[RMDB]
RNA sequence: GGGAACGACUCGAGUAGAGUCGAAAAGGGGUCAAGAGCUAUAAUCGUCCCGCAGGCGAAGAACAUACUGAAGCCUCCACGGUAUGGGAGCCUGUGGGACGGUAGCUCUUGACGGAGGCACCCAAAAUCUCAGCUUUUGUUCGCAAAAGCUGAGAAACUGCUUAUAAGUGUUCGCACUUAUAAGCAGAAAAGAAACAACAACAACAAC
Reactivity to 2A3 in 0.01 (KOAc 150mM, MgCl2 10mM, bicine 150mM(pH8.5), 24C), signal-to-noise 3, nucleotides 027 to 156: g010g010g050g020u000c010a000a000g000a000g000c020u060a050u170a300a130u200c010g000u000c010c000c010g010c010a000g020g000c010g070a160a010g000a010a020c000a010u010a000c020u040g040a160a020g000c010c010u000c000c010a000c000g010g020u000a000u000g000g010g000a010g010c010c000u010g000u000g000g010g000a000c010g000g010u050a000g000c000u010c000u000u000g000a000c010g000g000a010g000g000c000a030c000c000c000a030a080a080a130u030c000u010c000a000g000c000u040u020u000u020g050u060u190c220g010c150a000a000a000a000g000c000u000g000a000g000a000a000a000